An RNA of 177 nucleotides, treated with DMS and 2A3 and read out base by base. Reactivities are given for positions 27 through 126. The RNA was probed in 150 mM KOAc, 10 mM MgCl2 and 150 mM bicine (pH 8.5) at 24 C. 2A3 is a SHAPE reagent: it acylates the 2'-hydroxyl of flexible nucleotides of all four kinds. The data come from the RNA Mapping Database (RMDB), library OK1LIB.
RNA sequence: GGGAACGACUCGAGUAGAGUCGAAAACAAACAACAUGCCAAACAGUAGGGAAGAAGAGAAAGAGACGGUACCUGCAGAAGAAGCGCCGACUAACAACGUAACAGCAGACGAAGCAAGGCAUGAAAAGCAACGCUACCUCUUCGGAGGUAGUGUUGCAAAAGAAACAACAACAACAAC
Reactivity to DMS in 0.01 (KOAc 150mM, MgCl2 10mM, bicine 150mM(pH8.5), 24C), signal-to-noise 4, nucleotides 027 to 126: c070a070a070a100c180a060a170c030a020u010g000c040c020a060a160a120c090a010g040u020a020g010g000g000a090a050g000a060a050g000a090g010a100a110a060g010a070g030a080c020g040g000u010a060c060c010u010g000c030a100g010a090a050g050a100a070g020c090g000c030c020g000a110c010u020a070a020c190a050a090c040g000u010a040a090c090a090g000c110a030g010a090c040g010a070a090g000c080a070a060g000g040c010a010u000g000a070a030a050a090
Reactivity to 2A3 in 0.01 (KOAc 150mM, MgCl2 10mM, bicine 150mM(pH8.5), 24C), signal-to-noise 5, nucleotides 027 to 126: c000a000a100a000c030a010a010c020a030u070g010c010c010a080a010a030c010a030g050u050a020g010g030g070a070a050g080a060a030g060a020g050a040a120a000g090a000g060a040c020g010g020u060a090c010c010u070g000c060a020g030a200a000g050a050a000g040c040g030c020c010g030a030c030u050a020a030c060a030a010c060g050u080a040a020c010a040g020c000a000g020a070c020g030a030a000g040c010a040a000g050g000c000a010u040g070a020a060a000a010